[RMDB]
RNA sequence: GGGAACGACUCGAGUAGAGUCGAAAAAGUGGGCGCCUUGCUUGCGCCCGGCUCCGGGCCGUUCAAGCUGGCGGCAACGCUGACGGAAUCCGGGCUCGAUCUUGCGGCAAGCGGCUGCGGCAAGCUACCAGCAUAGUAGGUUCGCCUACUAUGCUGGAAAAGAAACAACAACAACAAC
Reactivity to 2A3 in 0.01 (KOAc 150mM, MgCl2 10mM, bicine 150mM(pH8.5), 24C), signal-to-noise 1, nucleotides 027 to 126: a080g070u070g000g000g050c030g030c060c040u120u140g040c140u080u090g040c030g020c000c010c020g020g000c010u020c010c020g040g010g000c000c020g020u050u140c090a110a070g070c050u070g060g000c050g010g040c030a050a020c030g010c040u060g050a040c030g040g020a050a050u020c000c000g000g000g030c020u010c040g050a150u090c020u070u120g020c010g070g010c020a040a050g050c000g060g040c010u040g000c030g080g000c020a000a040g000c010u090a070
Reactivity to DMS in 0.01 (KOAc 150mM, MgCl2 10mM, bicine 150mM(pH8.5), 24C), signal-to-noise 2, nucleotides 027 to 126: a080g020u000g010g000g010c010g070c030c090u000u010g000c160u000u000g020c030g020c030c020c020g010g020c170u000c010c020g010g000g020c020c010g020u010u030c160a070a100g020c040u000g010g010c000g000g010c170a060a090c090g020c010u010g000a050c040g020g010a060a140u000c040c000g000g000g000c010u000c110g010a070u010c030u010u020g020c040g000g000c030a070a050g000c050g010g000c040u010g000c020g030g000c040a040a050g020c290u010a170

This 177-nucleotide RNA was probed chemically with 2A3 and DMS.
For 2A3 the reverse transcriptase was SuperScript II with manganese.
The reactions ran in a buffer of 150 mM KOAc, 10 mM MgCl2 and 150 mM bicine (pH 8.5), at 24 C.
Source: RMDB library OK2TST, as collected in RNAgym.